[RMDB]
RNA sequence: GGGAACGACUCGAGUAGAGUCGAAAAAAGAGAGCAACGGGGCUAGCGAGUGGAUGUUCCGCCUCCCCAGGGUCCCGAGUGAGGCUUAUCCCGGGGAACUCGGCCCAGUCCCGAGAUAGCCGCGUCCGACCAGCAAAGUUCGCUUUGCUGAAAAGAAACAACAACAACAAC
Reactivity to DMS in 0.01 (KOAc 150mM, MgCl2 10mM, bicine 150mM(pH8.5), 24C), signal-to-noise 9, nucleotides 027 to 129: a060a030g010a070g010a060g010c100a130a090c030g000g000g060g000c030u010a040g010c030g000a110g000u000g000g030a070u020g000u010u010c020c030g000c260c080u010c000c020c010c020a080g020g010g010u020c080c010c010g000a100g010u050g020a080g010g010c200u030u020a070u030c010c000c010g020g000g020g010a060a040c070u020c040g010g010c100c120c030a110g010u010c060c010c010g020a090g000a030u000a030g000c000c000g010c090g000u020c040c030g000a180c180
Reactivity to 2A3 in 0.01 (KOAc 150mM, MgCl2 10mM, bicine 150mM(pH8.5), 24C), signal-to-noise 9, nucleotides 027 to 129: a000a000g170a000g000a000g030c030a020a040c040g020g010g030g030c010u030a030g040c020g060a030g040u190g030g020a070u090g080u160u040c030c020g040c020c010u030c000c010c000c010a020g030g010g000u040c010c010c010g010a030g050u170g030a080g030g020c030u080u090a050u090c000c000c000g000g000g010g000a040a040c030u010c030g060g000c030c010c020a010g070u040c000c000c000g010a010g000a020u030a000g000c000c010g090c000g020u010c010c010g020a070c020